The record gives the reactivity of an RNA of 207 nucleotides to 2A3 and DMS. The reactions ran in a buffer of 150 mM KOAc, 10 mM MgCl2 and 150 mM bicine (pH 8.5), at 24 C. 2A3 adducts were read by reverse transcription with SuperScript II with manganese.
RNA sequence: GGGAACGACUCGAGUAGAGUCGAAAAAUACACCAGCAGUAGGACUCAGCGACCGUCACAACAAGGUUGUGCUGGUAUCCGACGGUCGUAUAGCCCUGUCUUGCAGGUUGCCUUGCACUGACGUGCAACACCAUUUACAGAUUCGUCUGUAAAUGAACUUUUUGUCUAGUUUCGACUAGACAAAAAGAAAAGAAACAACAACAACAAC
Reactivity to 2A3 in 0.01 (KOAc 150mM, MgCl2 10mM, bicine 150mM(pH8.5), 24C), signal-to-noise 6, nucleotides 027 to 156: a000u110a030c060a010c010c000a000g000c000a010g020u150a000g000g020a010c010u030c070a000g000c000g010a000c010c000g010u010c010a060c060a200a150c080a280a130g060g010u030u030g030u060g030c040u050g040g020u030a060u040c030c050g000a000c000g000g000u010c010g010u050a060u050a040g020c010c010c000u030g060u050c090u040u150g020c030a050g050g020u040u060g040c020c010u030u040g000c020a020c050u220g110a090c180g020u020g000c010a040a010c020a030c060c010a000u000u000u000a000c000a010g020a040u020u130c150g080u010c080u000g000u000a000a010a000u010g010a030a060
Reactivity to DMS in 0.01 (KOAc 150mM, MgCl2 10mM, bicine 150mM(pH8.5), 24C), signal-to-noise 3, nucleotides 027 to 156: a110u000a100c030a140c000c020a040g020c040a040g010u000a050g030g000a030c020u000c080a170g000c010g010a020c000c000g020u000c040a200c090a100a120c140a130a090g020g020u000u000g020u000g020c010u000g030g000u000a020u000c020c010g000a030c000g010g000u000c020g000u000a100u000a040g020c020c010c000u000g000u000c030u000u010g010c030a090g020g010u000u000g000c030c080u000u000g010c020a060c010u010g020a140c300g020u000g000c020a020a030c090a130c070c000a030u000u000u000a000c000a010g010a090u000u000c300g020u010c000u010g010u000a000a010a010u000g000a070a130